[RMDB]
RNA sequence: GGGAACGACUCGAGUAGAGUCGAAAAGUAAUAGAUAGGUGGAUGACGAGAAAGGGUGCGCUGAUAUCCGCCACGAAUGCUAGCAGUAAAUAGAAUAGCGCUCCUAAUACAACUAGCAACAAAAGGAUAAGGUAUCGUGAUGUCAAUCACAUUGCGAGCAUUAAUUAAAUUUCGAUUUAAUUAAUGCAAAAGAAACAACAACAACAAC
Reactivity to DMS in 0.01 (KOAc 150mM, MgCl2 10mM, bicine 150mM(pH8.5), 24C), signal-to-noise 3, nucleotides 027 to 156: g030u000a100a170u010a100g020a160u010a060g000g040u000g020g010a060u000g020a210c080g010a160g000a110a110a180g020g000g020u000g010c050g000c040u020g020a150u020a080u000c020c020g010c020c000a150c010g010a090a140u010g010c020u000a020g020c050a160g000u000a050a070a140u000a160g000a110a090u010a060g040c040g050c040u020c020c010u000a120a140u010a110c020a040a030c020u000a020g010c010a060a170c110a070a100a090a100g000g020a120u010a100a080g000g020u000a070u010c040g020u030g020a020u000g000u000c030a140a150u000c160a080c020a010u000u000g020c000g010a100
Reactivity to 2A3 in 0.01 (KOAc 150mM, MgCl2 10mM, bicine 150mM(pH8.5), 24C), signal-to-noise 5, nucleotides 027 to 156: g000u020a020a140u040a130g070a030u060a100g000g020u010g020g010a020u050g040a070c130g020a020g090a140a100a040g070g010g000u060g000c010g000c010u000g020a010u020a030u100c000c030g000c020c010a020c030g080a110a040u110g030c030u040a010g000c040a020g030u140a060a090a100u110a090g080a060a060u030a030g020c020g010c010u010c000c010u040a090a030u070a030c010a030a020c020u030a010g020c030a010a040c020a050a120a030a010g080g020a080u080a110a060g070g010u070a030u080c000g010u010g010a000u020g050u050c090a090a090u120c000a040c000a020u000u040g010c000g010a020
Structure probing data (DMS and 2A3) for a 207-nucleotide construct. For DMS the reverse transcriptase was MarathonRT.